Source information
Conditions: 150 mM KOAc, 10 mM MgCl2 and 150 mM bicine (pH 8.5), 24 C. The record gives the reactivity of an RNA of 177 nucleotides to DMS and 2A3. For DMS the reverse transcriptase was MarathonRT.

[RMDB]
RNA sequence: GGGAACGACUCGAGUAGAGUCGAAAAAUACCGGAGAUCGAUAUGACGGCAGCAGUGCCUUGGCGCUUCUGCACGAUUGCGCGGCCCGCGACCCCCGGGGUGCUGCGUCCAUCAACCAGGGAGAGUUUAGGAAUAUAAGAUUCGUCUUAUAUUCCUAAAAAGAAACAACAACAACAAC
Reactivity to DMS in 0.01 (KOAc 150mM, MgCl2 10mM, bicine 150mM(pH8.5), 24C), signal-to-noise 6, nucleotides 027 to 126: a090u020a100c040c010g010g010a100g010a050u000c030g000a130u010a050u010g000a170c230g000g000c020a030g010c050a020g020u000g010c000c020u020u010g010g020c020g020c020u000u000c020u010g010c030a050c050g000a110u010u000g010c050g010c020g000g000c020c030c020g010c050g000a210c040c020c010c050c010g020g000g010g020u010g010c020u000g000c040g000u000c070c030a050u010c060a070a110c100c030a050g000g000g000a130g000a100g010u000u010
Reactivity to 2A3 in 0.01 (KOAc 150mM, MgCl2 10mM, bicine 150mM(pH8.5), 24C), signal-to-noise 9, nucleotides 027 to 126: a000u180a040c020c010g040g020a090g010a080u110c060g020a040u050a060u280g110a090c030g020g000c010a010g000c010a010g020u010g030c010c020u050u130g080g000c010g000c010u030u020c000u030g020c060a050c080g040a060u050u110g010c040g000c000g020g010c000c000c010g060c020g060a140c000c000c000c010c000g020g000g000g060u090g030c030u030g000c000g020u010c020c010a080u100c020a020a080c020c020a060g010g030g020a100g010a030g040u010u020